[RMDB]
RNA sequence: GGGAACGACUCGAGUAGAGUCGAAAAAGCCAUACCAUUACGAUGGUAUGGCAAGUCCGUGACGGCGAUGCAUCCCGCCUGGCCGAUGCCGAACUGCCGAUCUGGCUGAUGGUUCCUGCCCCGUCAAAAAACGUAAAGCACUUCGGUGCUUUACGAACCGAAUUCUAUACUUCGGUAUAGAAUUCGGAAAAGAAACAACAACAACAAC
Reactivity to DMS in 0.01 (KOAc 150mM, MgCl2 10mM, bicine 150mM(pH8.5), 24C), signal-to-noise 1, nucleotides 027 to 156: a130g000c020c000a000u000a020c000c010a040u000u030a100c250g050a160u000g010g000u000a000u010g000g010c000a020a020g000u000c000c000g030u010g040a090c020g010g000c030g000a210u000g000c000a050u010c040c030c030g040c020c040u000g000g010c050c050g000a080u000g020c010c010g010a120a040c000u000g010c030c030g020a090u000c030u000g110g000c030u000g030a120u010g010g030u010u010c030c030u020g000c060c030c030c010g030u020c050a000a040a120a080a140a100c010g030u000a000a020a020g000c000a010c020u000u000c300g010g020u000g020c000u000u000u000a000c000g000a020a070
Reactivity to 2A3 in 0.01 (KOAc 150mM, MgCl2 10mM, bicine 150mM(pH8.5), 24C), signal-to-noise 4, nucleotides 027 to 156: a000g000c000c000a000u000a000c000c010a000u060u020a040c210g080a010u020g000g000u000a000u000g010g000c000a010a000g020u000c020c010g020u030g050a110c030g000g010c040g030a030u110g030c010a030u040c010c040c030g050c040c100u070g030g000c040c030g020a020u060g060c020c020g090a150a090c060u130g040c030c000g070a130u040c060u110g020g000c010u040g040a110u120g020g020u030u080c000c020u030g030c010c000c010c000g010u030c000a020a010a000a040a030a100c000g000u010a000a000a000g010c000a000c000u020u110c240g070g000u000g000c000u000u000u000a000c000g000a010a000

An RNA of 207 nucleotides, treated with DMS and 2A3 and read out base by base.
For DMS, 2,726 sequencing reads were counted.
For 2A3 the reverse transcriptase was SuperScript II with manganese.
It was measured as part of the RMDB library M2RFPK.